[RMDB]
RNA sequence: GGGAACGACUCGAGUAGAGUCGAAAAGGGAGACCCGAGCAGAGGCAUAGCGAACUGCGCACGGCGAAGCCUUGAGGGAAUGCCGUAGGACCCGGGUUCGAUUCCCGGCAGCUCCACCGAAGGGCCAACUACCUCAGUGAUUCGUCACUGAGGUAGUAAAAGAAACAACAACAACAAC
Reactivity to DMS in 0.01 (KOAc 150mM, MgCl2 10mM, bicine 150mM(pH8.5), 24C), signal-to-noise 7, nucleotides 027 to 126: g020g000g000a120g000a110c040c010c020g020a120g030c130a080g000a090g010g000c040a080u010a150g000c060g000a110a120c060u010g020c050g020c100a070c050g000g000c020g010a120a160g020c010c020u020u040g000a210g010g020g000a060a080u030g000c020c000g010u020a140g010g000a140c100c030c000g000g000g000u010u010c110g010a270u020u010c000c000c000g010g000c110a050g000c030u020c020c020a110c060c080g010a140a060g000g000g020c020c110a120
Reactivity to 2A3 in 0.01 (KOAc 150mM, MgCl2 10mM, bicine 150mM(pH8.5), 24C), signal-to-noise 6, nucleotides 027 to 126: g050g010g010a090g030a040c000c000c020g010a030g020c020a030g020a060g050g020c060a070u110a090g050c060g060a110a050c050u070g010c030g010c030a030c030g040g000c040g050a060a020g030c000c000u070u110g060a090g010g040g020a050a060u110g030c020c010g010u040a070g040g060a050c000c000c020g000g000g010u040u080c050g020a070u040u070c000c000c000g010g010c010a020g010c010u010c010c000a050c000c010g040a050a040g000g000g000c010c000a010